[RMDB]
RNA sequence: GGGAACGACUCGAGUAGAGUCGAAAAGAUAUGGACUCGGGGUGGCUAGAAGCUAAUCGGAAACGAUUAGACUUCUUGGACCCACCUACGAGUCCUAAGUCAAAGGUACUUGCUUCGGCAAGUACCACAAGCCUAAUUCCUUCGGGAAUUAGGCUUGAAAAGAAACAACAACAACAAC
Reactivity to 2A3 in 0.01 (KOAc 150mM, MgCl2 10mM, bicine 150mM(pH8.5), 24C), signal-to-noise 1, nucleotides 027 to 126: g020a000u030a030u160g000g000a000c000u000c010g020g010g020g020u030g030g000c050u070a030g000a010a000g010c000u010a000a000u020c000g030g080a160a020a070c020g000a000u050u000a040g080a120c020u030u020c000u000u020g110g080a040c010c000c000a000c010c000u210a300c000g010a000g000u020c000c000u010a010a030g010u010c050a060a090a140g000g000u000a000c000u000u010g000c010u030u060c120g080g040c000a000a000g000u000a020c000c000a000
Reactivity to DMS in 0.01 (KOAc 150mM, MgCl2 10mM, bicine 150mM(pH8.5), 24C), signal-to-noise 2, nucleotides 027 to 126: g020a030u000a300u020g000g010a010c010u010c010g000g010g000g040u000g010g010c110u000a000g000a000a030g040c000u000a010a000u020c000g030g000a160a090a220c000g000a000u000u000a010g010a200c000u000u000c000u000u000g010g000a220c300c010c000a000c010c010u000a100c020g010a010g010u000c000c000u000a000a050g010u020c030a100a180a070g000g010u000a010c010u020u000g000c000u000u030c240g050g000c030a000a000g000u000a000c000c000a050